[RMDB]
The data come from the RNA Mapping Database (RMDB), library OK1LIB. Structure probing data (DMS and 2A3) for a 177-nucleotide construct.
RNA sequence: GGGAACGACUCGAGUAGAGUCGAAAAGAGCUAAUAUCUACUUCGUUUGUGCAUAUCACUAUAGGGAAGCUGAUGGGUUGCGACGUUCAAGCGAAAUCGCAGUGCCUAGUGGAAUGAACGGCUCGAAGGGUAUUGAAAACUUCGGUUUUCAAUACCCAAAAGAAACAACAACAACAAC
Reactivity to DMS in 0.01 (KOAc 150mM, MgCl2 10mM, bicine 150mM(pH8.5), 24C), signal-to-noise 2, nucleotides 027 to 126: g000a090g010c030u000a080a060u020a100u050c020u020a130c090u000u010c080g000u000u000u030g000u020g000c160a040u000a050u000c040a020c040u000a100u070a050g020g000g070a100a060g000c140u000g010a090u000g020g020g000u030u000g000c010g010a050c100g020u000u000c070a150a220g030c110g000a030a060a090u000c020g050c000a020g010u040g000c000c000u000a010g000u000g050g030a030a030u000g000a070a070c100g000g000c020u000c040g030a070a100
Reactivity to 2A3 in 0.01 (KOAc 150mM, MgCl2 10mM, bicine 150mM(pH8.5), 24C), signal-to-noise 2, nucleotides 027 to 126: g040a020g000c020u080a080a030u060a120u220c010u080a040c000u030u030c000g140u030u020u150g030u010g000c030a030u020a080u300c040a010c050u090a000u110a140g140g000g010a070a000g070c040u090g000a110u170g020g000g060u090u030g000c000g000a000c060g000u030u130c110a090a050g040c020g010a000a030a030u040c020g000c020a000g010u000g130c010c000u000a020g030u010g020g040a070a030u080g030a030a000c010g000g010c000u000c030g040a090a110
The RNA was probed in 150 mM KOAc, 10 mM MgCl2 and 150 mM bicine (pH 8.5) at 24 C.